[RMDB]
RNA sequence: GGGAACGACUCGAGUAGAGUCGAAAAGGCUACCAUGAUAAAGGAUAAAGCUGUUACCAUGGACAGGAACGACCUGGUGGACUCCAUUAACUUCAAGCGAUCGGUGUUUGAUAGAUACAAAAGAAGACUAGACCAUCUUAUUCGUAAGAUGGUCUAGAAAAGAAACAACAACAACAAC
Reactivity to 2A3 in 0.01 (KOAc 150mM, MgCl2 10mM, bicine 150mM(pH8.5), 24C), signal-to-noise 3, nucleotides 027 to 126: g040g000c020u030a020c010c010a030u090g040a050u250a100a100a060g070g000a060u150a130a140a030g020c030u020g030u060u050a060c010c000a030u060g060g010a030c020a080g000g060a100a070c040g070a120c010c040u010g000g010u000g030g010a030c020u000c010c020a010u090u070a060a080c000u000u020c020a040a030g040c010g100a030u100c110g150g030u130g030u090u040u020g050a050u090a080g080a040u120a150c100a060a110a020a010g150a110a030g030a010
Reactivity to DMS in 0.01 (KOAc 150mM, MgCl2 10mM, bicine 150mM(pH8.5), 24C), signal-to-noise 5, nucleotides 027 to 126: g010g020c030u010a120c010c010a050u000g020a060u010a080a070a070g010g020a130u010a080a110a100g020c030u000g000u000u000a060c040c040a040u000g000g010a150c080a070g010g020a110a120c120g010a090c050c020u000g010g010u000g010g010a090c050u000c020c030a080u010u010a070a110c070u010u000c040a020a070g020c080g010a090u020c130g020g010u010g010u010u010u010g010a070u010a040g000a090u020a050c150a060a040a080a090g000a100a120g020a180